Background:
The record gives the reactivity of an RNA of 177 nucleotides to DMS.
RNA sequence: GGGAACGACUCGAGUAGAGUCGAAAAUCAGACUGUCGUGGCUGCCACAGCGGCGUCCAGUGCUUUUGCUGUAGCACUCCUGCCCCCUGAUACACCAUGCCGUUGGCGUUUCGUAGAGGCUGACACGCCUACGCUACCGGUUCGCCGGUAGCGUAGGAAAAGAAACAACAACAACAAC
Reactivity to DMS in 0.01 (KOAc 150mM, MgCl2 10mM, bicine 150mM(pH8.5), 24C), signal-to-noise 1, nucleotides 027 to 126: u010c100a090g010a050c070u000g020u000c100g080u000g050g000c160u000g010c010c070a060c140a180g000c050g000g010c030g000u000c090c090a120g000u010g000c070u000u000u000u030g000c080u000g020u000a050g010c020a060c050u000c060c070u020g000c050c010c020c050c040u000g000a140u000a100c080a070c140c030a040u020g000c050c050g000u000u000g000g020c060g000u000u000u000c030g010u020a060g000a040g000g020c050u080g020a020c130a060c150g000
About this RNA: It was measured as part of the RMDB library OK2TST. For DMS the reverse transcriptase was MarathonRT.